Source: RMDB library OK3TST, as collected in RNAgym. An RNA of 207 nucleotides, treated with DMS and read out base by base.
[RMDB]
RNA sequence: GGGAACGACUCGAGUAGAGUCGAAAAGUGUUAUGUGCAUUGUAGUCGAUAGACCUUGAGGGAGCGGUUGUGCGUACGAAGCUUUAGGUAAGCUAAGGCCGAUAGGGGGCGGCUAUCGCGUACGGGAGCGACCUCAAGCAAUGGGAAGCCGCCCUGGGUAUAUAUAAUACUUCGGUAUUAUAUAUACAAAAGAAACAACAACAACAAC
Reactivity to DMS in 0.01 (KOAc 150mM, MgCl2 10mM, bicine 150mM(pH8.5), 24C), signal-to-noise 1, nucleotides 027 to 156: g030u000g010u000u000a070u000g020u010g030c020a100u000u020g010u000a070g030u000c040g000a190u000a130g000a040c110c010u000u010g010a020g020g000g000a300g040c000g010g020u040u010g010u010g030c000g080u000a040c040g020a100a070g000c010u000u000u000a010g000g040u010a110a220g000c010u000a030a060g010g030c030c030g020a050u000a040g030g000g020g020g020c000g000g010c000u020a040u010c040g020c000g020u000a040c040g020g010g010a110g020c050g000a260c020c020u010c010a010a040g020c050a050a000u020g000g020g010a070a130g020c020c000g010c000c000c010u000g000g000